[RMDB]
RNA sequence: GGGAACGACUCGAGUAGAGUCGAAAAAGCACGGUUUUUGAGGACGCAUUUUGUUCGUGCGGUAAUGCCCUCCUUUACACUUUCUCGCAUGGUGCGGGAGUGUGGAGAGGAAACAAAAGCUAGUCUCGAUAGGCGGUUAACUUCGGUUAACCGCCAACACUUUCGAGCAGUUCGCUGCUCGAAAGUGAAAAGAAACAACAACAACAAC
Reactivity to 2A3 in 0.01 (KOAc 150mM, MgCl2 10mM, bicine 150mM(pH8.5), 24C), signal-to-noise 1, nucleotides 027 to 156: a000g000c010a000c000g060g000u050u000u000u000u010g040a050g020g010a040c110g040c160a220u000u000u000u000g010u000u010c000g000u000g000c000g000g030u100a030a020u200g020c000c040c000u030c000c000u030u070u040a000c000a000c000u080u210u020c040u060c000g060c020a080u280g300g010u300g170c000g000g000g000a000g000u020g000u010g020g000a020g010a030g010g030a000a030a000c010a020a000a010a010g030c030u090a020g000u010c000u000c030g050a040u100a110g010g000c000g000g010u000u000a000a080c010u000u070c070g010g040u000u000a000a000c010c000g000c010c000a000a000
Structure probing data (2A3) for a 207-nucleotide construct. The reactions ran in a buffer of 150 mM KOAc, 10 mM MgCl2 and 150 mM bicine (pH 8.5), at 24 C.